Source: RMDB libraries RFM100 and RFMREP, as collected in RNAgym. The record gives the reactivity of an RNA of 177 nucleotides to 2A3 and DMS. 2A3 adducts were read by reverse transcription with SuperScript II with manganese. For DMS the reverse transcriptase was MarathonRT.

[RMDB]
RNA sequence: GGGAACGACUCGAGUAGAGUCGAAAAUCACUAUGCGCCAGUUCUGGUUGAGAUAUUUUGCCGCGACGGAAAAAACGUCCUGGCUGGCUUGCCUGAGCGCGCCGCAGCGCUUAAAAAUGCUCGCGGAACCUAUCUAUACCUUCGGGUAUAGAUAGGUAAAAGAAACAACAACAACAAC
Reactivity to 2A3 in 0.01 (KOAc 150mM, MgCl2 10mM, bicine 150mM(pH8.5), 24C), signal-to-noise 7, nucleotides 027 to 126: u050c010a020c120u110a090u210g030c020g000c020c030a040g020u130u080c030u060g050g010u130u210g090a050g030a040u160a160u110u180u150u130g010c000c000g000c040g010a010c010g020g000a070a030a010a010a000a020c010g000u000c000c000u010g010g000c010u010g020g000c000u000u040g020c000c010u030g010a040g000c000g000c020g020c000c000g000c000a000g010c000g010c020u030u030a010a070a020a000a020u050g010c020u050c110g000c000g000g000a000
Reactivity to DMS in 0.01 (KOAc 150mM, MgCl2 10mM, bicine 150mM(pH8.5), 24C), signal-to-noise 6, nucleotides 027 to 126: u020c030a080c090u020a080u030g010c030g000c010c050a090g010u010u010c040u000g010g030u000u020g010a070g010a100u030a060u010u010u010u010g010c020c000g030c300g010a020c020g000g000a000a050a080a090a070a090c030g000u000c010c030u000g010g010c010u010g010g000c030u000u000g010c210c020u010g000a090g010c000g020c070g000c010c020g000c020a050g010c020g000c020u000u010a010a030a080a100a170u000g000c040u000c110g010c010g000g010a120